[RMDB]
RNA sequence: GGGAACGACUCGAGUAGAGUCGAAAAAUCGGCCGUGCGCAGGAUCGGCCGAUCUAGGCCGCGCGAUCGCUACUACGUACCUGUCGUACGGUACUCGUACGUACUAGAGUACAGCACGCGUACAGGCAUCCAUCAAGAGAUUCGUCUCUUGAUGGAUAAAAGAAACAACAACAACAAC
Reactivity to DMS in 0.01 (KOAc 150mM, MgCl2 10mM, bicine 150mM(pH8.5), 24C), signal-to-noise 9, nucleotides 027 to 126: a040u000c010g000g010c010c000g020u000g020c120g040c160a130g010g000a130u000c010g010g010c020c000g000a010u000c060u000a110g010g010c010c010g010c030g000c020g000a070u010c160g020c020u000a120c190u000a130c250g010u000a020c020c020u000g000u000c020g010u000a010c030g000g010u010a040c130u010c020g010u000a010c020g000u010a020c030u010a030g000a150g010u000a010c060a060g020c020a080c030g000c020g010u000a090c160a130g000g000c050
Reactivity to 2A3 in 0.01 (KOAc 150mM, MgCl2 10mM, bicine 150mM(pH8.5), 24C), signal-to-noise 7, nucleotides 027 to 126: a000u010c010g010g000c010c010g020u090g010c150g040c140a090g110g080a070u040c010g010g000c010c010g000a010u000c010u070a050g130g000c010c000g000c000g000c010g070a170u150c110g000c040u060a080c050u060a070c160g010u010a010c010c000u010g000u010c010g000u010a020c010g000g040u070a110c060u050c030g010u010a010c000g020u010a010c030u110a030g070a050g050u010a010c010a030g000c010a010c010g010c000g010u040a040c050a040g020g000c010
Chemical mapping of a 177-nucleotide RNA with DMS and 2A3. The DMS profile rests on 23,642 reads. Source: RMDB library OK2TRN, as collected in RNAgym. The RNA was probed in 150 mM KOAc, 10 mM MgCl2 and 150 mM bicine (pH 8.5) at 24 C.